An RNA of 207 nucleotides, treated with DMS and read out base by base.
Reactivities are given for positions 27 through 156.
The reactions ran in a buffer of 150 mM KOAc, 10 mM MgCl2 and 150 mM bicine (pH 8.5), at 24 C.
For DMS the reverse transcriptase was MarathonRT.
The data come from the RNA Mapping Database (RMDB), library OK3TST.
High DMS reactivity at an A or C suggests that its Watson-Crick edge is free.

RNA sequence: GGGAACGACUCGAGUAGAGUCGAAAACGAGUUCACAGCAAAACUGAACAGAAAAUACAGGGUUCCCCCACCCCACACACACUCAUAGCCUCCCCCCACCAACAACAUCAGGCACCAGAGGAUAUAUUUGUUAUAAGCAAUGAAGCUACAUUGACACCGUAUAACGUGACUUCGGUCACGUUAUACGAAAAGAAACAACAACAACAAC
Reactivity to DMS in 0.01 (KOAc 150mM, MgCl2 10mM, bicine 150mM(pH8.5), 24C), signal-to-noise 1, nucleotides 027 to 156: c020g000a170g020u020u030c040a050c050a200g070c030a110a050a130a300c070u000g020a100a090c030a140g000a070a010a130a110u030a140c060a110g010g000g030u000u000c000c010c000c000c000a070c020c010c010c030a070c090a120c060a120c080a090c040u000c020a090u000a150g020c020c020u080c010c020c000c010c000c000a070c070c110a060a070c000a020a050c130a090u000c030a000g000g080c000a050c110c170a080g030a120g030g010a160u030a050u000a020u010u000u000g000u030u000a110u020a020a150g010c010a070a110u000g000a050a170g040c040u000a100c030a040u000u030g000a060c020a100c020